[RMDB]
RNA sequence: GGGAACGACUCGAGUAGAGUCGAAAAGUCAGCAUACAAGUCGCGCUAAAAGGCAGAUACAACUACGCCGAUCUAUAGUGACGAAGGCCUCAGGUCUUCCUUACGCUUAGGCUCGAAUUGGGAAGCGGACGUAGGUUGAAUUCGUUCAACCUACGUCAAAAGAAACAACAACAACAAC
Reactivity to DMS in 0.01 (KOAc 150mM, MgCl2 10mM, bicine 150mM(pH8.5), 24C), signal-to-noise 4, nucleotides 027 to 126: g000u040c020a080g010c030a070u010a050c040a040a020g010u010c000g000c070g000c000u010a020a040a120a060g000g020c060a090g000a080u040a150c260a080a090c150u010a180c170g010c000c000g000a100u030c080u020a080u040a100g010u020g000a060c200g010a030a050g010g010c020c000u050c150a110g030g030u010c010u010u010c000c030u000u000a040c030g010c080u010u000a120g000g000c020u000c020g000a030a050u010u000g000g000g000a050a110g010c050g010
Reactivity to 2A3 in 0.01 (KOAc 150mM, MgCl2 10mM, bicine 150mM(pH8.5), 24C), signal-to-noise 6, nucleotides 027 to 126: g100u040c020a020g020c010a030u090a210c030a090a030g010u010c010g000c020g050c110u150a070a040a030a030g030g000c030a010g020a060u170a100c090a110a060c090u140a030c090g000c010c000g010a010u000c020u040a130u090a090g020u040g030a050c040g010a010a000g020g020c000c010u170c100a060g010g020u000c000u040u020c020c010u040u080a040c050g020c030u020u030a020g000g030c020u000c020g090a140a120u080u060g040g010g050a080a010g060c040g050